RNA sequence: GGGAACGACUCGAGUAGAGUCGAAAAGGCGGCUUCGGCCGCCGAAACGGAGGGAUUUUCAAUGUUGGUAGUUGGAGUUGAGCUGUAAACUCAAUGACUUAGGUCUUCAUAGGUUCAAUUCCUAUUCCCUUCACCAUUUGUGCCUUUUCGAAGGCAAUGUAGAAGCUAGGUUCGCCUAGCUUCUACAAAAAGAAACAACAACAACAAC
Reactivity to 2A3 in 0.01 (KOAc 150mM, MgCl2 10mM, bicine 150mM(pH8.5), 24C), signal-to-noise 2, nucleotides 027 to 156: g000g000c000g000g030c030u040u080c200g180g000c010c000g040c000c010g020a020a030a010c090g000g020a000g000g010g000a040u000u080u080u220c150a140a070u110g050u130u090g110g060u150a120g040u050u100g020g020a030g010u000u000g000a000g000c060u030g110u300a090a130a080c060u040c070a050a070u050g000a000c000u040u100a120g150g000u000c010u120u040c020a050u090a080g030g000u000u010c000a020a010u000u000c000c000u040a040u000u040c000c000c000u000u000c010a060c030c020a040u120u100u110g070u070g000c000c000u020u080u040u060c190g070a000a000g000g000c000a000a020
Reactivity to DMS in 0.01 (KOAc 150mM, MgCl2 10mM, bicine 150mM(pH8.5), 24C), signal-to-noise 1, nucleotides 027 to 156: g050g020c000g050g020c010u000u000c290g020g030c000c000g060c000c020g000a000a020a060c060g020g000a020g080g020g010a150u010u000u020u000c100a020a080u010g000u010u010g020g010u020a170g000u010u010g010g010a100g060u000u000g000a020g030c000u000g040u000a120a080a150c090u000c030a070a100u000g010a130c090u000u000a180g090g020u000c010u000u000c060a160u000a110g000g000u000u000c050a030a300u000u000c010c000u000a120u000u000c010c010c000u000u000c000a070c000c030a040u000u010u030g010u000g020c010c000u000u000u000u020c180g010a060a000g010g010c020a000a060